[RMDB]
RNA sequence: GGGAACGACUCGAGUAGAGUCGAAAAGAUAUGGAUCCGAGGUAGGAGCUACGGUUCGGAAACGAACCCUAGCGCGAAACUACCCGGAUCCUAAGUCAAAACGAUCUCUGCUUCGGCAGAGAUCGAACAAAAUCUAUUGGUUCGCCAAUAGAUUUUGAAAAGAAACAACAACAACAAC
Reactivity to 2A3 in 0.01 (KOAc 150mM, MgCl2 10mM, bicine 150mM(pH8.5), 24C), signal-to-noise 3, nucleotides 027 to 126: g010a000u010a020u050g010g010a000u000c030c010g030a280g010g000u010a010g000g250a170g030c000u010a000c020g000g000u010u010c000g000g010a010a010a000c010g000a000a000c000c000c000u000a000g010c020g000c050g220a300a140a020c010u010a000c000c000c000g020g000a000u000c000c000u010a000a000g000u000c000a000a030a020a170c020g010a010u000c000u000c000u010g030c010u040u090c300g190g000c010a000g000a000g000a010u000c000g000a020a000
Reactivity to DMS in 0.01 (KOAc 150mM, MgCl2 10mM, bicine 150mM(pH8.5), 24C), signal-to-noise 4, nucleotides 027 to 126: g000a000u000a010u000g000g000a000u000c000c000g010a170g010g010u000a000g020g000a070g020c010u000a000c300g000g000u000u000c000g030g000a010a010a020c000g010a010a010c010c000c030u000a000g010c000g020c250g010a130a040a100c000u000a000c000c000c000g000g000a000u000c000c000u000a000a070g000u000c010a100a070a120a240c030g000a010u010c010u000c000u000g010c000u000u010c230g010g020c000a000g000a000g010a000u000c000g010a040a120
Overview:
This 177-nucleotide RNA was probed chemically with 2A3 and DMS. The 2A3 profile rests on 10,250 reads. It was measured as part of the RMDB library TTRDES. 2A3 adducts were read by reverse transcription with SuperScript II with manganese. The reactions ran in a buffer of 150 mM KOAc, 10 mM MgCl2 and 150 mM bicine (pH 8.5), at 24 C.